[RMDB]
RNA sequence: GGGAACGACUCGAGUAGAGUCGAAAACGAGCAGCACAGCCUCCUCGGGCGCGGCGGUGGGGAUGCGCGCGCGGAUGGCCUUGCGCAUGGCCAGCCAGUCGCGCAACAGCACGCUGAGCAGGCUCUCGCGCACGUGCGCGCGCACAAAGUGGAGCGCCUUUACGCACUGAUUCGUCAGUGCGUAAAGAAAAGAAACAACAACAACAAC
Reactivity to 2A3 in 0.01 (KOAc 150mM, MgCl2 10mM, bicine 150mM(pH8.5), 24C), signal-to-noise 1, nucleotides 027 to 156: c040g020a020g020c000a000g040c010a020c010a110g010c010c000u110c000c040u090c070g180g050g010c070g000c000g040g020c030g030g090u080g030g050g010g010a010u020g000c020g000c020g010c000g020c080g060g060a200u170g010g000c010c040u040u070g030c050g020c000a090u060g000g000c010c000a010g000c040c030a030g080u250c030g000c000g020c010a050a120c010a030g000c000a000c000g010c000u010g030a020g060c000a030g030g000c010u000c000u070c110g020c000g010c040a000c030g030u070g020c030g000c000g000c000g000c000a040c020a050a060a020g000u020g020g040a030g010c030g000c000